[RMDB]
RNA sequence: GGGAACGACUCGAGUAGAGUCGAAAAUAAAUAAAGACAAUAAAUUAAUUGGAUUUAUUUGGCUUUCACAUACAAUGGGGGAAGUACUGAUUCUAUCUGAUUACGUAUUAUGUAAUGCUUUAGGAUCCCGAGAGAACUCUUUCGAGAGUUCUCUCGGAAAAGAAACAACAACAACAAC
Reactivity to 2A3 in 0.01 (KOAc 150mM, MgCl2 10mM, bicine 150mM(pH8.5), 24C), signal-to-noise 1, nucleotides 027 to 126: u130a000a000a000u010a000a000a000g040a000c000a000a080u190a080a120a120u300u300a030a030u090u020g000g000a000u000u050u050a030u000u000u100g010g000c030u000u000u000c070a070c030a020u300a090c090a090a300u090g000g070g070g000g000a000a000g000u000a080c070u010g000a020u030u000c000u000a050u000c030u040g090a010u020u020a000c000g040u110a110u290u070a050u270g080u070a020a000u090g130c000u040u000u000a010g010g020a000u000c000